Chemical mapping of a 177-nucleotide RNA with 2A3 and DMS. DMS adducts were read by reverse transcription with MarathonRT. 2A3 adducts were read by reverse transcription with SuperScript II with manganese. The data come from the RNA Mapping Database (RMDB), library OK2TRN. The RNA was probed in 150 mM KOAc, 10 mM MgCl2 and 150 mM bicine (pH 8.5) at 24 C.
RNA sequence: GGGAACGACUCGAGUAGAGUCGAAAAUUUACCUGGUUUAGGUUACUUUGAUGAUCUUGCAGCUGCUCAAAGCAGAUGUGUCAAAGCACUAGAUAUGGGUGCAUGUCCACAGCUUGCACAGUUAGGACGAAGUAGUCUAUUUCGAUAGACUACUUCGAAAAGAAACAACAACAACAAC
Reactivity to 2A3 in 0.01 (KOAc 150mM, MgCl2 10mM, bicine 150mM(pH8.5), 24C), signal-to-noise 7, nucleotides 027 to 126: u080u070u090a070c010c010u050g110g030u030u040u070a030g000g030u040u130a050c010u040u030u040g020a040u050g010a030u080c050u060u230g000c030a040g010c030u110g030c020u080c200a130a120a040g000c010a000g010a040u070g090u020g010u100c010a020a010a030g030c040a040c030u020a020g040a090u130a150u200g160g000g010u030g020c020a030u050g030u020c040c040a070c010a040g030c010u050u100g000c040a040c010a050g040u120u140a060g020g040a020
Reactivity to DMS in 0.01 (KOAc 150mM, MgCl2 10mM, bicine 150mM(pH8.5), 24C), signal-to-noise 9, nucleotides 027 to 126: u010u010u010a110c010c000u000g010g010u000u000u000a020g020g000u010u010a060c030u000u000u000g010a040u000g010a060u010c070u010u020g050c020a070g010c100u010g010c130u010c190a090a100a130g020c020a020g000a020u000g020u000g000u000c020a020a020a030g020c170a050c020u000a040g000a050u010a080u010g010g010g010u000g010c070a030u010g000u000c030c090a090c210a100g010c020u000u000g010c040a050c060a110g020u010u010a090g010g010a280